[RMDB]
RNA sequence: GGGAACGACUCGAGUAGAGUCGAAAAGUGCAUGAAUUCGCCAUCGGAGCGCGCGGAAAACAUCGCGGUGCGCAGCAGCCACAUCGGCUACGGCCACAAUCCGCCGGUGGUGUGGGCCAUCGCCGACCAUAUCAAACACAUUCGUGUGUUUGAUAUGAAAAGAAACAACAACAACAAC
Reactivity to DMS in 0.01 (KOAc 150mM, MgCl2 10mM, bicine 150mM(pH8.5), 24C), signal-to-noise 9, nucleotides 027 to 126: g020u010g020c050a050u000g000a080a170u000u000c040g010c010c010a040u000c040g010g010a090g020c080g020c050g020c100g010g000a090a080a100a140c180a070u010c040g020c020g010g010u000g010c160g020c010a050g010c030a050g010c010c010a100c220a100u010c150g010g010c000u000a030c060g000g000c010c020a040c090a090a110u010c110c050g010c020c020g000g010u000g000g010u000g020u010g000g010g000c080c020a040u000c100g020c010c020g010a100c170
Reactivity to 2A3 in 0.01 (KOAc 150mM, MgCl2 10mM, bicine 150mM(pH8.5), 24C), signal-to-noise 9, nucleotides 027 to 126: g070u080g020c030a030u070g060a130a090u160u080c030g000c020c010a030u040c030g050g020a090g060c060g000c010g000c030g070g020a070a120a060a070c060a070u140c070g020c030g210g010u030g000c120g000c010a020g020c010a000g000c010c000a090c020a240u140c080g010g000c010u020a030c030g020g000c000c010a040c010a040a100u050c030c040g010c010c010g030g010u040g000g000u020g020u050g010g040g000c020c000a030u040c050g010c020c010g010a020c020
Chemical mapping of a 177-nucleotide RNA with DMS and 2A3. Conditions: 150 mM KOAc, 10 mM MgCl2 and 150 mM bicine (pH 8.5), 24 C. Source: RMDB library OK2TRN, as collected in RNAgym. As a SHAPE reagent, 2A3 marks flexible, mostly unpaired nucleotides at the ribose 2'-OH. For 2A3 the reverse transcriptase was SuperScript II with manganese. The 2A3 profile rests on 62,903 reads.